[RMDB]
RNA sequence: GGGAACGACUCGAGUAGAGUCGAAAAGACAAGUCCUAGGAUAUAGAUUUUUUGAUGCAUCUAUCUCAAAAAAAAACAGGCUCUGGACCUACAACAGUGGCGGGUGCUUUCGGUGGACUUCAUAAGGAUACUAGGUUGGUUUCGACCAACCUAGUAUAAAAGAAACAACAACAACAAC
Reactivity to DMS in 0.01 (KOAc 150mM, MgCl2 10mM, bicine 150mM(pH8.5), 24C), signal-to-noise 1, nucleotides 027 to 126: g000a040c100a050a070g010u000c010c000u010a100g000g000a060u010a080u010a120g010a000u020u000u000u000u010u010g020a130u010g000c230a050u000c080u000a030u000c040u000c010a000a000a000a020a000a030a090a070a080c080a030g020g000c010u000c070u000g000g000a090c080c010u000a040c110a020a050c110a030g020u000g000g000c040g000g020g000u000g000c090u020u000u010c110g030g030u000g010g000a010c090u000u000c060a110u000a110a140g010g000